[RMDB]
RNA sequence: GGGAACGACUCGAGUAGAGUCGAAAAGAUUUCUCUAAGUUUAUGGGACAUUUUAGAGGAUAGUUUUAGUUAGCCCUGUUUACGGGAGUAAUUAUUACGAAAUUUAAUAGUAAACUAAACUUGUAGAAGCUUAUGGUCAUUAUGAUUUCGGACACGACCUUGACUUUAAGUUCGCUUAAAGUCAAGGAAAAGAAACAACAACAACAAC
Reactivity to 2A3 in 0.01 (KOAc 150mM, MgCl2 10mM, bicine 150mM(pH8.5), 24C), signal-to-noise 2, nucleotides 027 to 156: g010a010u070u010u060c000u000c000u000a030a060g000u050u040u070a080u160g030g010g120a050c030a060u110u140u000u030a010g000a010g060g030a050u020a020g010u020u020u000u080a010g000u000u010a030g000c000c020c040u050g040u030u090u100a020c030g000g000g040a020g030u000a030a080u080u030a000u000u060a020c010g010a000a040a070u180u220u040a050a040u050a030g000u000a020a000a000c000u040a050a020a050c040u040u050g010u040a040g030a110a000g050c030u040u060a010u130g050g000u040c000a020u050u190a030u110g080a120u000u090u100c030g030g040a000c020a010c110g050a090
Reactivity to DMS in 0.01 (KOAc 150mM, MgCl2 10mM, bicine 150mM(pH8.5), 24C), signal-to-noise 1, nucleotides 027 to 156: g010a060u000u000u000c000u000c010u000a050a120g010u000u000u010a050u010g010g010g040a210c040a070u000u010u000u010a040g010a080g020g000a270u000a100g000u000u000u010u000a050g030u000u000a070g010c000c010c000u000g010u000u000u010a100c170g050g010g000a060g000u000a020a040u000u010a010u000u000a000c000g010a060a210a200u000u010u000a020a030u000a090g000u000a020a050a090c000u000a040a010a020c010u000u000g020u000a180g020a060a070g010c040u010u000a070u000g020g030u000c030a080u000u000a040u020g010a300u000u000u000c000g030g000a140c100a140c040g010a210